[RMDB]
RNA sequence: GGGAACGACUCGAGUAGAGUCGAAAAGGUUGCGCGUCGGCGCCGACCCGCUUGAGCGGUCCCCGACGCGUCAACGUCGCGCCGGCUGCCCGGUAAACCGGCAAUCGACGACCGAGCCUUGGCGGGCCAGUCAACCAAUAUUCGUAUUGGUUGACUGAAAAGAAACAACAACAACAAC
Reactivity to 2A3 in 0.01 (KOAc 150mM, MgCl2 10mM, bicine 150mM(pH8.5), 24C), signal-to-noise 7, nucleotides 027 to 126: g050g000u020u030g000c000g000c000g000u010c000g010g060c100g060c120c020g020a040c040c120c010g010c070u260u300g110a070g060c050g000g000u040c010c010c000c000g010a000c010g000c000g020u020c010a030a020c000g020u020c010g000c010g000c000c010g000g000c030u090g020c020c010c010g000g060u130a090a030a020c000c000g000g000c010a000a070u160c010g030a040c000g030a030c000c020g020a010g060c010c010u080u070g050g030c000g000g010g010c000
Reactivity to DMS in 0.01 (KOAc 150mM, MgCl2 10mM, bicine 150mM(pH8.5), 24C), signal-to-noise 6, nucleotides 027 to 126: g000g020u000u000g000c010g000c010g010u010c000g010g010c250g030c220c090g020a040c080c010c070g020c120u010u020g010a140g020c030g020g000u000c010c080c000c000g000a010c010g000c000g000u020c080a030a110c030g010u010c030g010c300g000c010c010g000g000c110u010g010c020c010c000g000g020u010a010a070a100c020c010g010g000c010a070a090u010c030g000a030c030g000a080c030c050g000a140g000c000c010u000u010g010g010c040g010g000g000c060
Structure probing data (2A3 and DMS) for a 177-nucleotide construct.
The RNA was probed in 150 mM KOAc, 10 mM MgCl2 and 150 mM bicine (pH 8.5) at 24 C.
It was measured as part of the RMDB libraries RFM100 and RFMREP.
Values cover nucleotides 27 to 126.